RNA sequence: GGGAACGACUCGAGUAGAGUCGAAAAGCAGUCGCGUUCGCGCGACUGCAAAGGUCUAAUUUGUCGGGCCGAGACAAAUCAAAAGGAUCCGAAAGGAUCCAUAAAGGGCGUUGUUCGCAACGCCCAACGAAUGUUAUUAGUUCGCUAAUAACAUUCGAAAAGAAACAACAACAACAAC
Reactivity to DMS in 0.01 (KOAc 150mM, MgCl2 10mM, bicine 150mM(pH8.5), 24C), signal-to-noise 5, nucleotides 027 to 126: g010c000a010g010u000c000g040c000g030u000u010c190g040c020g030c000g020a010c000u000g010c000a000a050a080g000g010u000c050u000a070a050u000u000u000g000u000c050g010g010g010c050c050g000a160g000a060c050a040a030a030u010c300a060a070a110a130g010g000a000u000c010c010g000a100a070a170g010g010a000u000c000c010a020u010a020a070a130g000g000g020c020g020u010u000g000u010u010c170g020c000a000a010c000g000c000c000c010a000a030
Reactivity to 2A3 in 0.01 (KOAc 150mM, MgCl2 10mM, bicine 150mM(pH8.5), 24C), signal-to-noise 4, nucleotides 027 to 126: g000c000a000g010u000c000g000c010g040u040u110c190g030c010g010c000g080a000c000u000g010c000a010a010a000g000g000u000c020u050a070a060u090u050u130g100u060c050g020g040g010c070c020g010a010g010a020c040a020a050a050u170c080a030a100a060a070g000g000a000u000c000c000g030a050a020a030g000g000a000u000c000c000a010u020a010a010a000g010g000g000c000g010u000u000g010u020u060c190g000c090a000a000c000g000c000c000c000a000a000